[RMDB]
RNA sequence: GGGAACGACUCGAGUAGAGUCGAAAAUACUCAUCAUACGGCAGACCUAAUGGAGAAGAGUCCACUUCAGCUACCUCUGGAUUUGGUCGAAGGACCAGUCUGACGGCUUUCUCAGUGAGGAACUGCACUGAAAUUGGAAUAGUAUGUCUGGGAGUCGAGUGAUUAUAUCUUUCGAGAUAUAAUCACUAAAAGAAACAACAACAACAAC
Reactivity to 2A3 in 0.01 (KOAc 150mM, MgCl2 10mM, bicine 150mM(pH8.5), 24C), signal-to-noise 6, nucleotides 027 to 156: u080a020c020u020c030a060u020c020a040u100a110c040g040g000c010a020g040a110c000c020u120a140a080u170g040g030a050g030a120a040g050a030g080u030c040c030a060c030u060u050c020a020g040c050u100a110c030c030u080c060u060g090g000a070u190u120u120g020g000u010c010g040a070a020g120g020a000c010c010a010g040u020c020u040g040a060c040g040g000c000u060u080u020c030u000c010a050g030u040g080a040g040g040a080a090c050u070g010c030a020c040u040g040a030a070a110u090u100g020g020a020a020u030a050g050u030a040u140g050u030c060u070g050g020g010a030g060u080c040g030
Reactivity to DMS in 0.01 (KOAc 150mM, MgCl2 10mM, bicine 150mM(pH8.5), 24C), signal-to-noise 3, nucleotides 027 to 156: u000a110c040u010c030a110u010c050a120u010a060c060g010g000c040a050g020a220c030c020u010a060a080u010g000g010a080g010a070a130g010a140g000u000c010c020a070c050u000u000c050a060g030c050u010a050c080c020u000c040u020g030g010a070u000u000u000g070g000u000c010g000a210a160g010g010a020c000c020a060g010u000c030u010g010a100c070g030g000c020u000u000u000c040u000c010a070g040u020g000a120g040g010a060a060c060u010g000c040a080c060u000g020a020a030a110u000u010g010g000a080a090u000a080g020u000a070u010g010u000c040u010g010g020g000a120g040u000c050g000

The data come from the RNA Mapping Database (RMDB), library OK3TST. An RNA of 207 nucleotides, treated with 2A3 and DMS and read out base by base. For 2A3 the reverse transcriptase was SuperScript II with manganese. For DMS the reverse transcriptase was MarathonRT.